[RMDB]
RNA sequence: GGGAACGACUCGAGUAGAGUCGAAAAAUAGUGUUGGAGAAAGUGAAAGACUUGCGGAAGUAAUUGCCGACAAGUGCCCAAGGGAAGAGCCAGCAUGUUAAGUUACCACCCAGUAAUUAGUAAAUGAUCCAUUAUCAUAUUUCGAUAUGAUAAUGGAAAAAGAAACAACAACAACAAC
Reactivity to DMS in 0.01 (KOAc 150mM, MgCl2 10mM, bicine 150mM(pH8.5), 24C), signal-to-noise 8, nucleotides 027 to 126: a060u020a080g010u000g010u010u000g000g000a100g010a100a110a120g010u010g010a040a020a020g000a080c000u000u000g010c000g000g000a050a030g010u020a060a060u010u020g010c000c000g000a100c010a010a010g000u000g010c010c010c020a110a110g010g010g010a070a080g000a120g010c010c010a020g000c030a020u000g010u010u010a050a070g010u000u000a030c010c060a110c020c010c020a150g000u000a030a040u010u010a110g010u030a060a080a100u020g000a200
Reactivity to 2A3 in 0.01 (KOAc 150mM, MgCl2 10mM, bicine 150mM(pH8.5), 24C), signal-to-noise 7, nucleotides 027 to 126: a000u140a020g040u020g010u020u030g030g040a050g130a080a130a080g130u150g110a040a070a010g030a010c000u010u010g000c010g000g050a010a030g050u200a110a250u140u300g050c000c010g040a130c000a000a000g000u030g010c020c000c010a040a080g030g000g000a050a040g060a020g130c000c010a000g000c000a010u060g060u090u130a080a030g010u010u020a050c010c010a060c040c010c020a000g000u020a010a060u060u060a010g140u190a050a130a150u130g030a030